[RMDB]
RNA sequence: GGGAACGACUCGAGUAGAGUCGAAAAGUACGAUUUUUCGAAAUCGUACGAAGGUCAGGUGGCAGCACCACGACACUGGUGGCGGCGACCGAGCCGAACAGAAUAUGUGUAAUUUCGAUUACACAAAAUUAGUAAGGUAUUUCGAUACCUUACUAAUAAAAGAAACAACAACAACAAC
Reactivity to DMS in 0.01 (KOAc 150mM, MgCl2 10mM, bicine 150mM(pH8.5), 24C), signal-to-noise 9, nucleotides 027 to 126: g000u000a010c000g010a000u000u000u000u000u020c160g010a020a010a010u000c000g010u000a010c000g010a100a090g010g010u000c050a260g010g010u000g010g020c020a080g010c010a090c000c000a020c150g010a130c300a100c300u010g010g010u000g020g020c020g010g010c010g010a030c000c010g000a280g000c010c000g000a080a100c180a080g010a100a090u010a060u010g010u000g000u000a010a010u000u000u010c190g010a030u000u000a000c000a000c000a030a030a080
Reactivity to 2A3 in 0.01 (KOAc 150mM, MgCl2 10mM, bicine 150mM(pH8.5), 24C), signal-to-noise 9, nucleotides 027 to 126: g000u000a000c000g000a000u000u010u010u030u140c120g070a010a000a010u000c000g000u000a000c000g010a100a020g010g020u110c060a030g020g010u030g090g030c020a030g010c010a030c010c020a010c040g130a050c060a040c100u070g050g020u050g170g090c090g020g000c010g030a000c000c010g000a010g010c010c020g010a020a010c020a030g240a150a040u230a090u170g000u000g000u000a010a010u020u090u110c190g070a020u000u020a000c010a000c000a030a070a000